[RMDB]
RNA sequence: GGGAACGACUCGAGUAGAGUCGAAAAAAGUAGGUUUCAUUCCAGGGAUGCAGGGGAUGGUUCAAUAUACGGAAAUCCAUCAACGUAAUCCAGUAUAUAAACAAACUCAAAGACAAAAACCACAUGAAAAAUUACCAUUAUUCGUAAUGGUAAUUUUAAAAGAAACAACAACAACAAC
Reactivity to DMS in 0.01 (KOAc 150mM, MgCl2 10mM, bicine 150mM(pH8.5), 24C), signal-to-noise 3, nucleotides 027 to 126: a040a050g020u000a050g010g000u010u000u000c080a110u000u010c060c100a120g020g000g010a020u000g000c100a150g010g010g000g010a060u010g010g000u000u000c060a080a050u010a110u030a070c180g020g000a010a070a100u010c030c040a050u020c080a070a020c090g000u010a300a090u000c010c010a140g020u000a030u000a060u000a060a040a070c030a020a060a040c030u000c050a040a110a130g000a110c070a000a070a050a080a130c060c040a040c170a070u020g000a050
Reactivity to 2A3 in 0.01 (KOAc 150mM, MgCl2 10mM, bicine 150mM(pH8.5), 24C), signal-to-noise 1, nucleotides 027 to 126: a000a000g130u140a020g000g050u070u010u020c020a020u080u000c040c030a010g040g050g010a040u020g020c110a030g020g040g010g030a000u000g000g040u020u020c040a070a050u050a020u070a220c090g050g000a010a090a050u030c010c010a020u040c020a020a060c040g020u080a000a010u040c000c000a000g010u030a030u000a000u060a050a080a010c050a030a030a070c060u060c050a130a070a070g050a120c040a010a060a110a010a050c020c040a040c040a190u120g110a030